Structure probing data (DMS and 2A3) for a 177-nucleotide construct. The 2A3 profile rests on 2,442 reads. 2A3 is a SHAPE reagent: it acylates the 2'-hydroxyl of flexible nucleotides of all four kinds. Source: RMDB library OK2TRN, as collected in RNAgym. DMS adducts were read by reverse transcription with MarathonRT.
RNA sequence: GGGAACGACUCGAGUAGAGUCGAAAAGAUCAAUUAUGAUUGCAAUGUAAUAUGUCAAGGCAGACAUAUCUAGCUGUCGCCUUAGCUAGAGAUUGCCGCUUUAUUGCUUUCAUAAGAACGGCAAGAAGGAUAUGCCAUGAUUCGUCAUGGCAUAUCCAAAAGAAACAACAACAACAAC
Reactivity to DMS in 0.01 (KOAc 150mM, MgCl2 10mM, bicine 150mM(pH8.5), 24C), signal-to-noise 3, nucleotides 027 to 126: g000a150u000c090a090a140u010u000a020u000g000a000u010u000g030c010a020a000u000g000u020a060a060u010a060u000g010u020c110a080a090g000g020c040a110g000a020c050a020u000a050u000c020u000a000g030c040u000g000u000c160g010c230c120u000u010a010g000c000u000a020g000a010g000a120u000u000g010c000c040g020c020u000u000u010a020u000u000g010c010u000u010u000c010a000u000a000a020g000a050a080c160g000g010c090a070a050g010a110a100
Reactivity to 2A3 in 0.01 (KOAc 150mM, MgCl2 10mM, bicine 150mM(pH8.5), 24C), signal-to-noise 3, nucleotides 027 to 126: g070a110u070c030a000a090u080u020a000u020g020a000u000u010g000c010a000a000u080g050u270a060a030u070a090u150g110u090c090a070a050g040g000c020a010g020a140c050a030u100a020u010c010u020a010g000c010u000g110u160c040g150c050c070u050u040a000g000c000u010a000g010a000g030a030u160u230g000c030c030g040c020u010u050u020a010u020u020g010c000u030u000u000c010a020u030a020a030g060a090a020c060g060g020c040a030a090g090a070a060